[RMDB]
RNA sequence: GGGAACGACUCGAGUAGAGUCGAAAAUGAAAAGCCUUAGUGUACUAUAUUUCCAGGCAGUUUACCUUUUGGACUGACUGAGCCCCUGAAAGGGAAGACUGAUAUCAUCCAGCACUUUUGGCUGAGUAAGUGACCAUGCUGCCUUACCCUGCCUCAGUGGAUACAGUUUGUUCGCAAACUGUAUCCAAAAAGAAACAACAACAACAAC
Reactivity to DMS in 0.01 (KOAc 150mM, MgCl2 10mM, bicine 150mM(pH8.5), 24C), signal-to-noise 1, nucleotides 027 to 156: u010g000a120a060a280a070g010c020c010u000u000a040g020u010g010u000a110c040u010a060u010a060u010u000u000c040c030a050g000g010c020a050g000u000u000u000a140c060c040u010u050u000u030g050g000a050c010u010g000a140c090u010g010a140g050c100c010c010c170u010g030a040a080a090g040g020g030a090a100g030a050c030u000g000a080u020a120u010c030a100u010c050c030a100g020c030a080c050u020u000u010u000g030g040c000u000g010a050g040u000a030a060g000u010g000a070c010c020a140u000g000c030u000g010c000c000u000u010a130c030c010c010u010g000c040c000u010c020a120g020
Reactivity to 2A3 in 0.01 (KOAc 150mM, MgCl2 10mM, bicine 150mM(pH8.5), 24C), signal-to-noise 2, nucleotides 027 to 156: u100g010a030a000a000a000g030c010c010u040u030a040g030u010g000u050a070c080u030a040u070a090u260u110u110c070c010a010g070g000c010a000g000u120u230u080a120c030c000u080u020u070u090g010g000a040c030u060g030a090c040u070g040a060g020c040c020c000c050u030g050a070a030a030g000g000g030a030a010g030a030c010u010g050a050u070a040u130c050a020u120c030c040a020g010c030a000c000u010u090u100u130g000g000c000u000g000a000g000u020a020a020g010u010g060a020c040c000a010u110g000c010u030g010c040c010u050u110a060c030c020c010u000g070c020c060u180c020a020g260